[RMDB]
Overview:
The record gives the reactivity of an RNA of 177 nucleotides to DMS and 2A3. As a SHAPE reagent, 2A3 marks flexible, mostly unpaired nucleotides at the ribose 2'-OH. For DMS, 8,892 sequencing reads were counted.
RNA sequence: GGGAACGACUCGAGUAGAGUCGAAAAAGAAAGAGCGUAGCACACACACAGACUAAGUCUGACACACACCUACGCUAAACAUCUUAGUGUGUGAUCGAGAUAUCGAUGUGUGUGUAAGAUGAAAAAAGAUAUAACAAGGGUUCGCCCUUGUUAUAUCAAAAGAAACAACAACAACAAC
Reactivity to DMS in 0.01 (KOAc 150mM, MgCl2 10mM, bicine 150mM(pH8.5), 24C), signal-to-noise 6, nucleotides 027 to 126: a100g020a080a110a100g010a200g010c000g020u000a120g000c030a010c010a000c000a010c010a060c100a080g000a030c290u000a070a100g010u000c000u000g000a040c000a010c000a000c000a000c000c020u000a020c010g010c010u000a030a070a130c060a020u000c020u000u000a040g010u000g010u000g010u000g000a070u000c010g000a030g000a090u010a060u000c000g000a110u000g010u000g010u000g010u000g000u000a010a010g000a040u010g000a000a060a050a070a080a070
Reactivity to 2A3 in 0.01 (KOAc 150mM, MgCl2 10mM, bicine 150mM(pH8.5), 24C), signal-to-noise 4, nucleotides 027 to 126: a000g170a020a060a010g100a000g000c000g000u010a000g010c000a000c000a010c000a000c000a000c000a030g050a030c060u130a220a100g050u020c010u010g010a000c000a000c000a000c000a000c020c020u010a000c010g000c010u020a050a040a010c020a020u050c010u040u050a020g000u010g000u010g000u000g020a090u010c020g030a000g040a100u160a060u190c030g020a060u010g000u000g000u000g000u000g000u010a000a000g000a000u040g050a110a000a000a010a010a000

DMS adducts were read by reverse transcription with MarathonRT.